[RMDB]
Structure probing data (DMS and 2A3) for a 177-nucleotide construct. 2A3 adducts were read by reverse transcription with SuperScript II with manganese. The 2A3 profile rests on 3,246 reads.
RNA sequence: GGGAACGACUCGAGUAGAGUCGAAAAUGAAGAUCUCCAACUAGACGCCACAAAGGCCUUUGGACAGCUCCUGAGACGUAUCAAGAUGUCCCAUCAAGAAGAACUUACUCAACACCUGGAGAAGGUCGCGUGUAAUCAAAUUCGUUUGAUUACACGCAAAAGAAACAACAACAACAAC
Reactivity to DMS in 0.01 (KOAc 150mM, MgCl2 10mM, bicine 150mM(pH8.5), 24C), signal-to-noise 3, nucleotides 027 to 126: u000g030a140a080g010a080u000c080u000c010c020a050a110c100u000a120g010a110c090g020c040c040a060c070a050a140a140g010g010c050c030u000u000u000g000g000a130c110a100g000c020u010c040c040u000g000a100g010a060c070g000u000a040u000c070a040a150g010a100u000g000u000c000c020c010a200u000c110a060a120g000a070a070g000a060a020c040u000u000a110c050u000c010a060a070c130a060c140c040u020g000g000a140g020a120a030g000g000u000c130
Reactivity to 2A3 in 0.01 (KOAc 150mM, MgCl2 10mM, bicine 150mM(pH8.5), 24C), signal-to-noise 3, nucleotides 027 to 126: u150g000a040a020g040a120u040c030u000c010c010a000a020c000u050a040g030a120c040g010c020c000a060c070a110a100a040g050g040c000c030u040u050u070g070g000a010c010a020g000c010u000c040c010u020g020a050g000a060c060g070u070a050u130c040a060a020g020a100u070g050u050c010c000c000a030u050c020a020a090g080a050a010g010a030a030c010u040u100a100c010u060c010a020a060c030a050c070c010u050g060g010a130g020a060a010g040g000u020c060
High DMS reactivity at an A or C suggests that its Watson-Crick edge is free. It was measured as part of the RMDB library OK2TST. The RNA was probed in 150 mM KOAc, 10 mM MgCl2 and 150 mM bicine (pH 8.5) at 24 C. Reactivities are rounded to 0.1 and cut off at 0 and 3.